Chemical mapping of a 177-nucleotide RNA with 2A3 and DMS. For 2A3 the reverse transcriptase was SuperScript II with manganese. The reactions ran in a buffer of 150 mM KOAc, 10 mM MgCl2 and 150 mM bicine (pH 8.5), at 24 C. DMS adducts were read by reverse transcription with MarathonRT.
RNA sequence: GGGAACGACUCGAGUAGAGUCGAAAAGGCGAGGUCUUCGGACCUCGCCAAAUGACCGCCAUUAUUGGCUAAGGCUACACGGUCGGCCGGGUCAAAUGCCGAAAACUUCCGCCUUCGGGCGGAAGAAUCAUUAACACAUCUUCGGAUGUGUUAAUGAAAAAGAAACAACAACAACAAC
Reactivity to 2A3 in 0.01 (KOAc 150mM, MgCl2 10mM, bicine 150mM(pH8.5), 24C), signal-to-noise 2, nucleotides 027 to 126: g010g010c000g000a000g040g040u030c040u150u200c300g050g010a010c000c020u000c010g030c000c000a000a010a000u010g000a000c000c000g100c000c000a080u140u190a100u280u300g010g010c050u100a210a110g000g000c000u040a040c100a000c070g080g040u080c070g010g010c000c000g030g000g000u020c010a000a000a080u080g010c000c000g040a060a040a040a070c000u000u000c000c000g010c020c010u060u090c200g070g030g000c000g000g000a000a000g000a000a010
Reactivity to DMS in 0.01 (KOAc 150mM, MgCl2 10mM, bicine 150mM(pH8.5), 24C), signal-to-noise 3, nucleotides 027 to 126: g040g020c010g020a010g030g020u010c000u000u020c150g030g010a020c000c000u000c010g010c000c000a010a020a050u000g000a020c010c010g040c020c000a070u000u010a140u000u000g010g010c010u010a060a070g000g020c010u000a080c090a130c030g000g010u010c230g000g000c000c000g020g010g000u000c000a080a040a020u010g020c000c000g000a140a070a120a130c000u000u000c000c000g010c020c000u000u000c200g010g010g010c000g010g000a000a000g000a070a100